The record gives the reactivity of an RNA of 177 nucleotides to DMS. The RNA was probed in 150 mM KOAc, 10 mM MgCl2 and 150 mM bicine (pH 8.5) at 24 C. For DMS the reverse transcriptase was MarathonRT. For DMS, 570 sequencing reads were counted.
RNA sequence: GGGAACGACUCGAGUAGAGUCGAAAAAUGUGUAACAAAAGCAGCAUCGUUGAUACUUGAUCUCUAGUGCGAUAUGGUAGAAAUGAAAGAGAUGCAAUGCGAUGGGACCAAGUGAUACGAGUUCCAAGAGUUGUGGAUGGUUCGCCAUCCACAACUCAAAAGAAACAACAACAACAAC
Reactivity to DMS in 0.01 (KOAc 150mM, MgCl2 10mM, bicine 150mM(pH8.5), 24C), signal-to-noise 1, nucleotides 027 to 126: a050u000g070u000g000u060a030a140c110a040a060a080a170g020c040a100g010c030a120u000c000g000u000u000g000a300u010a020c020u000u000g010a030u000c000u000c000u000a090g020u010g040c030g020a040u000a020u020g040g000u020a020g000a150a030a040u000g020a090a000a140g000a120g000a080u000g000c040a020a140u000g010c070g020a240u000g010g000g000a020c050c000a070a030g000u000g000a180u010a060c060g000a200g060u000u000c010c000a130a170